An RNA of 177 nucleotides, treated with 2A3 and read out base by base. The data come from the RNA Mapping Database (RMDB), library RFM100. For 2A3, 295 sequencing reads were counted. The RNA was probed in 150 mM KOAc, 10 mM MgCl2 and 150 mM bicine (pH 8.5) at 24 C. For 2A3 the reverse transcriptase was SuperScript II with manganese.

RNA sequence: GGGAACGACUCGAGUAGAGUCGAAAAUAUCAUUUAUGGCCACUAUUUAAACAAGUUACGGGCGCUCAUUUAUUCGCAAGUUUGAAUAUCUUGAGAAGUAAGUAGUAAGAUAAAUAAUUCGCCUACUGUUUAAGGAAUGCUUCGGCAUUCCUUAAACAAAAGAAACAACAACAACAAC
Reactivity to 2A3 in 0.01 (KOAc 150mM, MgCl2 10mM, bicine 150mM(pH8.5), 24C), signal-to-noise 1, nucleotides 027 to 126: u110a020u130c050a020u040u110u220a130u210g020g000c020c000a030c040u000a120u050u100u090a200a130a050c110a060a000g080u080u020a030c140g080g020g000c260g000c060u040c000a040u000u000u040a030u000u020c000g000c130a110a000g190u010u000u150g000a000a030u050a020u030c020u130u150g000a000g030a160a080g090u050a050a020g000u000a000g000u000a000a010g020a040u030a180a140a000u030a000a030u090u110c020g080c000c000u080a080c160u030